Source: RMDB library M2PK90, as collected in RNAgym. An RNA of 177 nucleotides, treated with DMS and read out base by base. The DMS profile rests on 532 reads. The reactions ran in a buffer of 150 mM KOAc, 10 mM MgCl2 and 150 mM bicine (pH 8.5), at 24 C. Reactivities are rounded to 0.1 and cut off at 0 and 3. DMS adducts were read by reverse transcription with MarathonRT. Values cover nucleotides 27 to 126.

[RMDB]
RNA sequence: GGGAACGACUCGAGUAGAGUCGAAAAAGAAAGAGAUCGCAGCUGCGAAAGAGGACGCGUACGAUCCGAAAUACUCGAAGCAGCUAACCGGAAAACGGAAGGAUCCAUCCCAAAGCGAUCAAAAAAAGUUUUACAGUGUGUUCGCACACUGUAAAACAAAAGAAACAACAACAACAAC
Reactivity to DMS in 0.01 (KOAc 150mM, MgCl2 10mM, bicine 150mM(pH8.5), 24C), signal-to-noise 1, nucleotides 027 to 126: a060g030a100a000a120g010a110g000a000u000c000g010c030a160g060c000u000g000c000g000a010a200a300g010a060g000g000a170c250g020c040g000u010a060c100g040a080u000c080c000g000a070a170a100u000a160c000u000c000g000a080a230g010c000a000g010c040u020a090a060c130c040g010g000a020a020a130a110c010g000g030a040a040g000g080a070u000c030c100a020u010c020c000c020a010a190a060g000c000g020a000u010c000a000a000a040a080a070a040a060